[RMDB]
RNA sequence: GGGAACGACUCGAGUAGAGUCGAAAAUACGAAAAUGCGUGAGAAGGUACAUAUAGGCACCAGGUAACCCUCCAAAGUAGAAUUAGGAAGAUGGAACCAGGUGGAGUUGGAGGUUACAAUGAGUUAACUGGUGCGAGCUAUUCGUAGCUCGCGCCAGAAAAGAAACAACAACAACAAC
Reactivity to DMS in 0.01 (KOAc 150mM, MgCl2 10mM, bicine 150mM(pH8.5), 24C), signal-to-noise 2, nucleotides 027 to 126: u000a020c160g030a040a130a080a090u020g000c000g040u010g020a130g020a080a060g020g000u030a060c050a070u020a030u030a100g000g000c050a020c080c090a020g010g010u000a060a080c040c020c060u000c000c010a000a020a140g000u000a080g060a010a000u060u000a060g000g000a040a080g010a090u060g000g000a190a050c040c000a060g020g020u000g000g000a040g040u030u000g000g000a110g000g010u000u020a030c060a030a050u020g030a040g010u000u010a120a080

Chemical mapping of a 177-nucleotide RNA with DMS. The reactions ran in a buffer of 150 mM KOAc, 10 mM MgCl2 and 150 mM bicine (pH 8.5), at 24 C. Reactivities are given for positions 27 through 126.